[RMDB]
RNA sequence: GGGAACGACUCGAGUAGAGUCGAAAAGAUAUGGACCUACUCAUCGGAGCGAGGAUCUUCUUUCGGAAACGAAAGAAGGGAGCUCUGAUGAGGUAGGUCCUAAGUCAAAGACUGGGUUCGCCCAGUCGCUAACUCCGUGGUUCGCCACGGAGUUAGCAAAAGAAACAACAACAACAAC
Reactivity to 2A3 in 0.01 (KOAc 150mM, MgCl2 10mM, bicine 150mM(pH8.5), 24C), signal-to-noise 1, nucleotides 027 to 126: g040a030u100a060u180g010g010a000c000c010u000a010c000u000c010a000u000c020g030g000a010g020c010g040a300g080g020a020u000c020u000u000c010u020u010u010c020g000g040a090a080a090c020g000a010a010a010g000a000a000g000g000g010a010g000c000u010c010u010g010a010u000g010a020g000g010u020a000g000g000u000c000c000u000a000a010g010u020c020a150a130a050g010a000c000u000g000g060g000u060u100c200g100c070c000c010a010g010u000c010
Reactivity to DMS in 0.01 (KOAc 150mM, MgCl2 10mM, bicine 150mM(pH8.5), 24C), signal-to-noise 2, nucleotides 027 to 126: g000a020u000a300u010g010g000a000c000c000u000a010c000u000c000a010u000c010g020g010a010g030c000g010a060g010g000a010u020c020u010u000c000u000u000u000c000g020g000a200a100a230c030g020a010a000a000g020a010a010g000g000g000a060g020c010u000c000u000g010a010u000g000a000g000g010u010a000g020g020u000c010c010u000a010a080g020u010c040a110a090a190g000a010c000u000g010g000g010u020u010c300g010c020c010c000a000g020u010c010